Record summary:
This 177-nucleotide RNA was probed chemically with DMS and 2A3.
RNA sequence: GGGAACGACUCGAGUAGAGUCGAAAAAAUCCGAAAGAUGUGAAACAAACGGAAUGGAAAUCGGUUUUGCCAAAUGAAGUUUACAGAGUUGCCAGAGAAUCAGGAACCGAGACUCCACACACUGGCAGUAGUAAAUACGUUUCGACGUAUUUACUACAAAAGAAACAACAACAACAAC
Reactivity to DMS in 0.01 (KOAc 150mM, MgCl2 10mM, bicine 150mM(pH8.5), 24C), signal-to-noise 7, nucleotides 027 to 126: a090a070u000c010c000g020a060a080a100g000a120u000g010u010g000a120a070a110c110a070a140a140c080g000g000a070a100u000g010g010a050a110a110u000c030g010g010u000u000u000u000g020c060c070a050a070a090u000g010a080a080g010u000u000u000a060c110a100g010a080g000u000u010g000c010c010a030g010a100g000a080a090u000c100a100g000g000a060a030c040c020g000a050g010a090c130u000c010c040a060c130a080c170a080c020u000g000g010c040a090
Reactivity to 2A3 in 0.01 (KOAc 150mM, MgCl2 10mM, bicine 150mM(pH8.5), 24C), signal-to-noise 3, nucleotides 027 to 126: a000a000u070c050c010g040a130a050a070g140a120u150g050u100g180a160a090a030c040a030a100a000c030g040g030a040a040u080g020g030a020a030a120u040c020g010g080u030u020u080u070g080c000c010a000a110a090u170g030a100a040g050u080u100u050a040c040a020g050a020g080u110u050g030c000c010a010g040a010g070a120a070u130c070a050g000g040a020a010c010c010g020a030g030a060c050u020c000c010a040c000a020c000a000c060u030g030g000c020a010
Background:
For 2A3, 2,440 sequencing reads were counted. Reactivities are given for positions 27 through 126.